[RMDB]
RNA sequence: GGGAACGACUCGAGUAGAGUCGAAAACAUGGGGAACUACAUCUGUGUCGCGAGUUCGAUUCUCGCCAGGGCCUGGCCCUGUAGCUCAGUUGGUAGAGCAAGCUGUUCCCCGGACACUUGUCGUCAUAAAAGUUGCCCCCGUUCGCGGGGGCAACAAUCACCUUUUAGUCUUCGGACUAAAAGGUGAAAAAGAAACAACAACAACAAC
Reactivity to 2A3 in 0.01 (KOAc 150mM, MgCl2 10mM, bicine 150mM(pH8.5), 24C), signal-to-noise 1, nucleotides 027 to 156: c050a100u170g000g000g000g000a000a030c030u120a080c060a140u120c050u000g070u030g060u170c000g000c000g000a000g000u010u000c000g000a000u000u020c000u000c000g020c000c000a010g010g000g000c050c300u190g160g030c010c010c000u000g000u000a000g000c000u000c000a040g010u150u150g090g230u250a010g000a000g020c000a010a000g000c050u040g010u000u000c000c000c000c000g030g010a040c050a030c020u070u180g040u230c060g030u030c040a040u120a200a050a020a120g000u000u000g000c000c010c000c050c020g020u000u060c100g000c040g040g010g000g000g000c000a000a030c000a000a000
Reactivity to DMS in 0.01 (KOAc 150mM, MgCl2 10mM, bicine 150mM(pH8.5), 24C), signal-to-noise 1, nucleotides 027 to 156: c070a110u000g010g010g050g030a030a050c010u000a000c040a070u010c120u020g040u000g010u010c000g030c010g020a040g010u010u000c040g000a300u000u000c040u000c000g010c030c000a070g030g030g000c020c140u010g030g000c000c010c040u000g010u000a040g020c000u010c000a120g000u000u020g030g020u000a050g010a040g020c010a190a230g000c090u000g010u000u010c010c000c000c010g000g000a050c010a160c200u000u000g040u000c000g000u010c010a100u000a090a060a090a150g040u000u020g080c000c000c000c000c060g030u000u000c180g050c010g030g070g000g000g000c000a000a000c010a020a130